Chemical mapping of a 177-nucleotide RNA with 2A3 and DMS. High DMS reactivity at an A or C suggests that its Watson-Crick edge is free. Conditions: 150 mM KOAc, 10 mM MgCl2 and 150 mM bicine (pH 8.5), 24 C. For 2A3, 1,360 sequencing reads were counted.
[RMDB]
RNA sequence: GGGAACGACUCGAGUAGAGUCGAAAACUCAUGGCGUGUUUAGGGGGCUGCACCGAAUGCGAUUUCAACUAUUUACCAGCAUUCCCCAGGAGAUCGUGCAGAUCGCUUAUCGCCAGCUAAAUUGCAGCAGUACCCUGCGAUUCGUCGCAGGGUACUGAAAAGAAACAACAACAACAAC
Reactivity to 2A3 in 0.01 (KOAc 150mM, MgCl2 10mM, bicine 150mM(pH8.5), 24C), signal-to-noise 3, nucleotides 027 to 126: c060u100c060a040u040g010g010c030g030u090g090u200u150u160a130g000g000g040g000g030c000u030g000c000a000c000c070g020a040a010u040g030c000g040a010u010u020u260c080a120a020c000u080a070u100u140u140a170c060c040a050g000c000a020u030u040c000c020c000c000a040g060g090a050g000a060u070c050g000u080g000c020a000g050a110u030c050g000c050u010u060a040u140c010g000c030c000a000g000c000u110a090a170a090u130u080g030c060a050g000
Reactivity to DMS in 0.01 (KOAc 150mM, MgCl2 10mM, bicine 150mM(pH8.5), 24C), signal-to-noise 1, nucleotides 027 to 126: c000u000c070a100u010g000g000c000g000u070g000u000u060u000a100g010g040g020g000g000c000u000g050c030a110c090c070g000a100a030u000g000c060g000a030u020u000u080c150a010a150c030u030a100u020u050u000a040c160c000a150g010c130a150u000u010c050c020c000c000a140g000g070a060g000a000u020c000g030u030g000c100a060g000a000u000c010g000c000u000u000a020u000c030g020c020c000a180g000c020u030a000a060a060u000u030g020c000a060g000